[RMDB]
RNA sequence: GGGAACGACUCGAGUAGAGUCGAAAACAUGAGCUCUAUCCAUCUAUCCAUCCCCUCCCAUUCGCUAGAAUGUUGCAGGUGGAGAUUUCGCUCUUAUGUUUUCUCGAUGCCUCCCAUUCCUAUCGUUGAGGGAGCGGAAUUUCGAUUCCGCUCCCUCAAAAGAAACAACAACAACAAC
Reactivity to 2A3 in 0.01 (KOAc 150mM, MgCl2 10mM, bicine 150mM(pH8.5), 24C), signal-to-noise 1, nucleotides 027 to 126: c030a050u080g000a070g030c030u120c090u070a100u000c060c000a030u000c000u090a160u050c010c000a080u050c000c000c000c000u030c030c000c000a020u050u020c000g060c110u080a070g000a060a000u010g050u110u120g070c040a010g000g000u040g110g000a000g000a000u000u030u150c020g000c000u000c020u070u190a110u000g110u000u010u000u010c030u000c080g030a000u050g050c000c000u000c000c040c000a040u090u240c030c000u090a160u230c000g060u000u000